[RMDB]
RNA sequence: GGGAACGACUCGAGUAGAGUCGAAAAACGGAUAGAUUCGUCUAUCCGUGCAUCUCAUAACAGUCAGAGAAAGUCUGCUAAGAUCUCACUUAGAUAAAGAGAAGAGAGUCGAGUUCGCUCGACUCAACAAUCGCAGAGAAUUCGUUCUCUGCGAUUGAAAAGAAACAACAACAACAAC
Reactivity to DMS in 0.01 (KOAc 150mM, MgCl2 10mM, bicine 150mM(pH8.5), 24C), signal-to-noise 4, nucleotides 027 to 126: a020c000g000g000a000u000a000g000a030u000u020c200g020u000c000u010a000u000c000c000g030u000g010c170a120u000c010u000c010a150u020a080a090c140a020g010u000c010a040g000a070g000a090a140a080g000u000c010u000g010c040u000a020a020g000a040u000c020u000c030a050c030u000u000a030g010a130u020a020a030a070g000a040g000a060a190g000a170g010a020g010u000c000g000a010g010u000u000c220g010c010u010c000g010a010c000u000c000a020a100
Reactivity to 2A3 in 0.01 (KOAc 150mM, MgCl2 10mM, bicine 150mM(pH8.5), 24C), signal-to-noise 4, nucleotides 027 to 126: a000c000g000g010a000u000a000g030a010u010u050c170g030u000c100u000a000u000c010c000g000u000g000c010a090u000c010u010c020a060u130a170a090c030a020g150u100c020a000g020a000g100a300a280a040g300u010c010u020g010c030u030a020a040g020a080u050c020u020c040a030c030u030u060a050g060a270u180a250a120a010g050a010g020a050a050g130a010g000a000g010u000c000g000a000g000u000u050c130g050c030u000c000g000a000c000u000c010a010a010
This 177-nucleotide RNA was probed chemically with DMS and 2A3. The 2A3 profile rests on 4,609 reads. For 2A3 the reverse transcriptase was SuperScript II with manganese. It was measured as part of the RMDB library M2PK50. The reactions ran in a buffer of 150 mM KOAc, 10 mM MgCl2 and 150 mM bicine (pH 8.5), at 24 C.